[RMDB]
RNA sequence: GGGAACGACUCGAGUAGAGUCGAAAAGAUAUGGAAUCUGUUAACAACAGCUAUGACGUCGGAAACGACGUAUAGACAUGUUGGACAGAUUCCUAAGUCAAAGUGGUAAUGCUUCGGCAUUACCACACCUGUACAGCUACUUCGGUAGCUGUACAGGAAAAGAAACAACAACAACAAC
Reactivity to DMS in 0.01 (KOAc 150mM, MgCl2 10mM, bicine 150mM(pH8.5), 24C), signal-to-noise 2, nucleotides 027 to 126: g010a030u000a300u010g000g000a050a010u000c000u010g020u000u000a170a300c010a020a000c000a070g020c000u000a020u000g010a030c010g010u040c000g000g000a200a080a180c010g000a030c000g040u010a000u000a010g000a120c090a150u000g010u000u000g010g000a020c000a010g010a000u000u010c000c000u010a040a060g000u000c000a120a050a110g060u000g020g010u000a020a000u000g040c000u010u030c300g020g000c000a000u010u010a000c000c000a000c010a020
Reactivity to 2A3 in 0.01 (KOAc 150mM, MgCl2 10mM, bicine 150mM(pH8.5), 24C), signal-to-noise 2, nucleotides 027 to 126: g010a000u050a050u150g000g000a010a000u000c000u000g010u060u150a300a110c010a030a000c020a030g020c000u030a030u160g300a130c010g020u040c010g000g030a080a050a040c000g020a000c000g020u020a030u000a000g020a080c130a300u080g010u000u000g000g000a000c010a000g000a000u000u020c000c000u010a060a000g030u000c050a070a070a110g010u010g000g000u000a010a000u000g010c020u070u100c300g180g000c000a000u010u010a010c010c000a010c000a030